[RMDB]
RNA sequence: GGGAACGACUCGAGUAGAGUCGAAAAACACACACUGAACAAAAACCGUCUCUGCAGAAAGACUGGAAACCAGAGAUCUUUCAACCGCGUCGAAACGCUCAAAAACGCGUGUGUGCAGAUUCGGCGCAAAAUAAUGCGCAUUCGUGCGCAUUAUUUUAAAAGAAACAACAACAACAAC
Reactivity to DMS in 0.01 (KOAc 150mM, MgCl2 10mM, bicine 150mM(pH8.5), 24C), signal-to-noise 6, nucleotides 027 to 126: a090c050a100c080a050c110a060c090u030g010a080a080c130a080a100a090a140a170c020c000g000u010c020u000c000u000g000c020a190g010a010a010a000g010a050c010u010g000g010a090a080a170c210c060a030g000a070g000a090u000c000u000u000u000c000a290a050c050c030g010c010g000u020c050g010a090a070a080c080g020c090u030c100a040a070a080a110a040c040g010c010g000u020g000u010g020u030g010c040a010g000a060u000u000c010g010g010c140g020c120
Reactivity to 2A3 in 0.01 (KOAc 150mM, MgCl2 10mM, bicine 150mM(pH8.5), 24C), signal-to-noise 9, nucleotides 027 to 126: a000c090a000c010a000c020a020c080u170g090a220a030c090a100a110a060a020a020c010c000g020u020c010u010c000u030g000c020a010g020a030a020a000g030a030c010u030g070g100a200a060a030c050c010a010g020a010g010a190u020c010u010u030u010c030a040a030c030c020g000c000g010u030c020g050a080a120a100c090g050c070u110c110a070a140a050a020a020c030g020c020g020u110g010u020g020u050g040c010a010g000a030u010u020c010g020g010c020g030c030
Source: RMDB library OK1LIB, as collected in RNAgym. The record gives the reactivity of an RNA of 177 nucleotides to DMS and 2A3. Values cover nucleotides 27 to 126.